[RMDB]
RNA sequence: GGGAACGACUCGAGUAGAGUCGAAAACUGUCCACUAGAGCCGGUCGUAGCGCUGAUCUGUGCGCGUACUGCGUCAGGUACGAUCCGCCCGGUAAGCGUGCCGGCGAUCUUGCUGCGCGUGGCGGACACCCGAGUCGUAGUUCGCUACGACUCGGGUAAAAGAAACAACAACAACAAC
Reactivity to 2A3 in 0.01 (KOAc 150mM, MgCl2 10mM, bicine 150mM(pH8.5), 24C), signal-to-noise 2, nucleotides 027 to 126: c000u040g070u050c010c000a080c060u130a040g070a030g180c030c010g040g000u160c040g040u060a040g000c000g000c110u030g040a030u000c010u030g100u110g020c010g000c010g050u120a090c050u110g050c030g090u050c030a060g000g000u010a000c040g000a080u010c050c050g100c130c050c000g020g010u010a030a020g130c070g120u090g020c020c020g010g000c010g000a000u010c010u090u160g030c030u030g030c010g040c020g010u050g070g030c080g000g000a010c020
Reactivity to DMS in 0.01 (KOAc 150mM, MgCl2 10mM, bicine 150mM(pH8.5), 24C), signal-to-noise 1, nucleotides 027 to 126: c040u000g000u000c000c000a160c150u000a120g040a160g000c000c090g000g010u000c180g020u000a100g000c020g010c240u000g020a130u040c010u000g110u020g000c010g050c060g000u000a030c070u000g000c070g000u000c060a030g000g010u000a020c100g000a110u000c180c080g000c090c010c000g000g010u000a090a120g000c160g010u000g000c080c060g020g010c060g000a030u000c100u000u020g000c000u000g000c060g010c080g010u000g000g030c030g000g000a060c080